[RMDB]
RNA sequence: GGGAACGACUCGAGUAGAGUCGAAAAGGUGAUUGUGAUACUCGCUAGUGUCAUUCAUCGAAUGACACUAUUAGACUGCUACAAUCACAUUACGUGACUCAAUUAUUUAGCAGUCUAAUUGAUAACAUAACGCGAGAUAUGUUAAAGUCACGUAUCGCCCUCGAUCACCAUUCGUGGUGAUCGAGGGAAAAGAAACAACAACAACAAC
Reactivity to 2A3 in 0.01 (KOAc 150mM, MgCl2 10mM, bicine 150mM(pH8.5), 24C), signal-to-noise 1, nucleotides 027 to 156: g050g000u010g000a000u010u000g020u000g010a010u050a010c000u000c000g000c020u020a000g000u010g000u010c000a000u010u030c000a160u110c260g000a000a010u000g000a000c000a010c020u000a010u000u000a020g030a030c010u000g000c000u110a080c000a000a000u000c000a000c010a010u020u080a000c000g000u000g000a000c040u040c080a120a150u180u120a060u280u200u070a060g040c000a000g030u000c000u010a000a000u040u040g100a040u010a160a000c020a010u180a030a000c040g000c020g000a030g060a010u030a030u050g020u000u180a160a000a000g000u000c000a000c000g030u060a060u110c050g010
The data come from the RNA Mapping Database (RMDB), library OK3TST.
Structure probing data (2A3) for a 207-nucleotide construct.
Reactivities are given for positions 27 through 156.
The RNA was probed in 150 mM KOAc, 10 mM MgCl2 and 150 mM bicine (pH 8.5) at 24 C.